[RMDB]
RNA sequence: GGGAACGACUCGAGUAGAGUCGAAAAUGAAAGUGUGGAUGCAGCCCUGUUGCCCAACUUUACCCGUGGCAAUGCCCGCGCAGACGAUCUGGUACGCAAUAACGGCUAUGCCGCCAACGCCAUCCAGGAAUGCACUGCUAUUCGUAGCAGUGCAUUCAAAAGAAACAACAACAACAAC
Reactivity to DMS in 0.01 (KOAc 150mM, MgCl2 10mM, bicine 150mM(pH8.5), 24C), signal-to-noise 3, nucleotides 027 to 126: u010g000a010a010a120g020u010g020u010g000g010a110u010g010c050a050g000c020c100c050u010g020u000u000g000c030c030c060a080a080c090u000u000u010a120c100c080c070g030u010g010g030c020a100a090u010g000c020c020c000g020c080g000c010a090g010a090c140g000a070u010c010u000g050g020u020a120c200g000c040a070a090u010a120a290c070g010g000c000u010a180u010g020c000c010g010c010c030a040a190c130g000c010c010a110u000c030c020a050g000
Reactivity to 2A3 in 0.01 (KOAc 150mM, MgCl2 10mM, bicine 150mM(pH8.5), 24C), signal-to-noise 2, nucleotides 027 to 126: u160g030a040a050a010g070u110g060u090g100g050a070u130g030c020a050g030c030c000c060u100g080u000u030g010c000c030c000a000a050c010u120u060u070a120c020c000c020g040u070g020g000c020a040a080u060g000c030c010c000g000c010g000c030a030g050a150c060g020a090u080c020u020g000g050u030a030c040g000c000a020a090u020a050a030c020g020g000c010u070a130u300g010c000c010g000c020c000a040a010c020g000c010c000a020u000c020c000a010g050